[RMDB]
RNA sequence: GGGAACGACUCGAGUAGAGUCGAAAAGGCUCGCCGGAUAAGGGCAGCCCCGUCCUGACCGUCGACGAUGACCGGCGGAUGCGGCGACGCGGAUCGCAGCUACCCGAUAUAGCGAUGCUGCAGAAUAUACUCGGGUAUAUUUCGAUAUACCCGAGUAAAAAGAAACAACAACAACAAC
Reactivity to 2A3 in 0.01 (KOAc 150mM, MgCl2 10mM, bicine 150mM(pH8.5), 24C), signal-to-noise 3, nucleotides 027 to 126: g040g000c020u040c060g000c020c010g050g010a100u090a170a040g050g000g010c000a040g000c010c030c000c040g040u020c010c000u040g080a080c010c010g020u020c000g020a060c080g180a300u240g120a120c050c010g000g000c020g000g020a010u060g040c000g010g000c010g010a020c030g010c010g020g030a040u050c080g010c000a010g030c000u050a040c020c010c000g060a050u140a040u140a220g090c060g030a020u050g000c010u010g000c010a020g140a150a020u300a020
Reactivity to DMS in 0.01 (KOAc 150mM, MgCl2 10mM, bicine 150mM(pH8.5), 24C), signal-to-noise 5, nucleotides 027 to 126: g020g020c040u000c080g030c010c010g010g020a120u010a130a120g000g010g010c010a070g000c020c020c020c110g010u000c000c000u000g000a150c010c000g020u000c000g000a120c080g000a120u010g010a120c100c010g020g000c010g020g010a080u000g010c010g000g010c020g010a040c100g030c040g020g010a090u010c060g010c040a070g000c010u000a130c080c020c010g000a070u010a100u010a110g010c040g000a110u000g010c010u000g000c000a120g010a070a070u020a130
Source: RMDB library OK2TRN, as collected in RNAgym. Chemical mapping of a 177-nucleotide RNA with 2A3 and DMS. For DMS, 5,777 sequencing reads were counted. Reactivities are given for positions 27 through 126. For DMS the reverse transcriptase was MarathonRT. The 2A3 profile rests on 3,434 reads. 2A3 adducts were read by reverse transcription with SuperScript II with manganese.